[RMDB]
RNA sequence: GGGAACGACUCGAGUAGAGUCGAAAAUGAACCAGGUGUCAAUAUUUCCGCUUGUCAACGGCGAGGCUGGAAGACCUCUUCCAGACAAGGAGAAGAUAUCAACCGGGACGUUUGCCGCACCAUAAUCAGAACCUCCGCCAAUGAUGAAUUGAACGAACCUCAGUAAUCACUUCGGUGAUUACUGAGGAAAAGAAACAACAACAACAAC
Reactivity to DMS in 0.01 (KOAc 150mM, MgCl2 10mM, bicine 150mM(pH8.5), 24C), signal-to-noise 1, nucleotides 027 to 156: u000g030a070a160c040c020a130g000g120u010g040u000c050a160a140u000a050u000u010u000c010c000g010c000u000u000g020u000c000a120a000c140g080g030c300g000a090g020g060c010u010g010g020a090a100g000a110c120c090u010c030u000u000c010c000a280g010a010c090a050a070g000g010a180g050a020a080g000a130u000a060u000c020a080a070c050c000g040g040g000a180c030g050u000u000u010g020c070c130g000c020a050c090c030a070u030a080a090u000c010a080g000a050a060c060c010u000c080c050g020c060c020a000a120u000g000a100u030g050a170a020u000u000g030a060a090c100g030a020a250
Reactivity to 2A3 in 0.01 (KOAc 150mM, MgCl2 10mM, bicine 150mM(pH8.5), 24C), signal-to-noise 3, nucleotides 027 to 156: u100g020a020a040c010c000a040g010g010u040g040u060c060a100a080u020a060u070u050u030c050c040g020c060u030u040g040u050c070a100a040c060g020g010c030g000a010g000g010c030u090g020g150a080a020g100a160c010c060u090c000u130u030c010c010a000g010a050c020a000a050g050g030a090g010a050a030g040a030u070a020u080c040a010a060c040c010g000g010g010a010c030g020u000u120u110g070c060c020g010c010a030c000c030a050u170a130a080u100c040a010g040a100a050c000c000u040c030c050g000c050c010a040a070u040g010a020u070g020a040a090u110u090g020a060a050c090g010a030a010